[RMDB]
RNA sequence: GGGAACGACUCGAGUAGAGUCGAAAAUGCAAAUGGCAGCCUGGUUGGCACAACUUUGCAGGGCAAGCCUAUUGGUAUGUUCUUCCCUUAUGACAUCGAACUUGUCACAGGAAAGCAAAAUAUUCUCGUUCUCAAUCUACUUCGGUAGAUUGAGAACAAAAGAAACAACAACAACAAC
Reactivity to 2A3 in 0.01 (KOAc 150mM, MgCl2 10mM, bicine 150mM(pH8.5), 24C), signal-to-noise 1, nucleotides 027 to 126: u040g020c010a000a030a030u020g030g020c020a010g000c010c010u090g180g100u110u140g100g080c000a000c000a080a220c080u150u050u080g000c030a020g000g040g000c010a040a140g020c010c010u090a090u030u160g060g010u070a030u060g070u070u100c040u000u060c000c010c050u020u060a140u000g020a000c000a010u030c100g090a090a110c060u040u030g010u030c010a000c000a040g000g090a040a000a080g030c080a050a030a120a030u150a050u020u050c040u000c020
Reactivity to DMS in 0.01 (KOAc 150mM, MgCl2 10mM, bicine 150mM(pH8.5), 24C), signal-to-noise 1, nucleotides 027 to 126: u010g020c030a060a050a060u000g040g050c070a260g030c010c000u000g000g040u000u020g060g060c090a030c120a110a150c190u000u040u000g000c020a140g010g000g000c040a010a300g000c010c000u000a020u050u000g000g000u020a090u000g000u000u000c110u000u000c010c030c020u000u020a070u020g000a000c040a000u000c130g020a140a090c180u000u000g010u000c020a020c250a120g010g010a020a030a060g000c250a000a070a090a110u020a130u000u000c080u050c150
The record gives the reactivity of an RNA of 177 nucleotides to 2A3 and DMS. Source: RMDB library 15KREP, as collected in RNAgym. The 2A3 profile rests on 975 reads. In probing experiments dimethyl sulfate is read out at A N1 and C N3, which are open when not base-paired.